This 177-nucleotide RNA was probed chemically with 2A3 and DMS. Source: RMDB library TTRDES, as collected in RNAgym.

[RMDB]
RNA sequence: GGGAACGACUCGAGUAGAGUCGAAAAGAUAUGGAGCCAAGCCGUGAACUACCUUCGGUGGUCGGAAACGACCAUUCGAAGGCACGGUAGUUGGCUCCUAAGUCAAACGGAGGGUUCGCCCUCCGAAGAAUCGAAUCAACUUCGGUUGAUUCGAUUCAAAAGAAACAACAACAACAAC
Reactivity to 2A3 in 0.01 (KOAc 150mM, MgCl2 10mM, bicine 150mM(pH8.5), 24C), signal-to-noise 1, nucleotides 027 to 126: g040a000u080a030u150g010g030a000g010c010c010a000a000g110c040c000g020u000g020a070a080c150u190a110c300c020u030u030c000g010g000u010g000g000u060c000g060g000a030a100a030c000g020a000c000c000a000u270u270c020g010a040a000g000g000c030a000c030g000g030u070a030g050u000u040g000g020c000u000c000c000u000a000a000g020u010c030a030a000a080c000g000g000a000g020g000g060u070u220c300g100c080c020c050u000c000c000g000a000a000
Reactivity to DMS in 0.01 (KOAc 150mM, MgCl2 10mM, bicine 150mM(pH8.5), 24C), signal-to-noise 1, nucleotides 027 to 126: g000a060u030a300u010g010g000a010g010c000c000a060a100g000c000c020g020u020g000a080a090c090u010a300c060c020u000u000c000g000g060u010g000g010u010c000g040g000a110a040a170c040g000a000c000c000a020u000u040c010g010a000a020g000g020c010a000c000g000g000u000a040g020u000u000g010g000c000u010c000c010u020a000a080g000u000c030a140a130a250c040g000g000a000g030g000g020u010u000c300g030c000c000c000u000c010c030g000a060a020